An RNA of 207 nucleotides, treated with 2A3 and read out base by base. The 2A3 profile rests on 531 reads. The RNA was probed in 150 mM KOAc, 10 mM MgCl2 and 150 mM bicine (pH 8.5) at 24 C.
[RMDB]
RNA sequence: GGGAACGACUCGAGUAGAGUCGAAAAUCUUGCUUGUAAAUACAAUUUUGAGAGGUUAAUAAAUUACAAGUAGUGCUAUUUUUGUAUUUAGGUUAGCUAUUUAGCUUUACGUUCCAGGAUGCCUAGUGGCAGCCCCACAAUAUCCAGGAAGCCCUCUUCAUCCUUCUCAGUUCGCUGAGAAGGAUGAAAAAGAAACAACAACAACAAC
Reactivity to 2A3 in 0.01 (KOAc 150mM, MgCl2 10mM, bicine 150mM(pH8.5), 24C), signal-to-noise 1, nucleotides 027 to 156: u030c000u000u010g020c010u010u000g030u010a020a110a020u230a120c110a140a250u080u090u180u140g090a180g000a060g050g040u090u070a060a060u120a100a180a100u050u030a000c000a000a000g010u010a030g050u060g040c040u050a120u100u140u000u110u230g140u050a160u030u190u050a030g000g000u040u030a030g030c020u030a120u160u110u110a050g000c000u050u030u040a040c030g040u020u030c000c010a000g000g000a000u000g020c000c030u000a090g020u060g000g000c000a040g060c000c000c000c010a000c010a020a020u020a000u160c000c000a010g000g000a000a000g000c040c010c000u000c000u000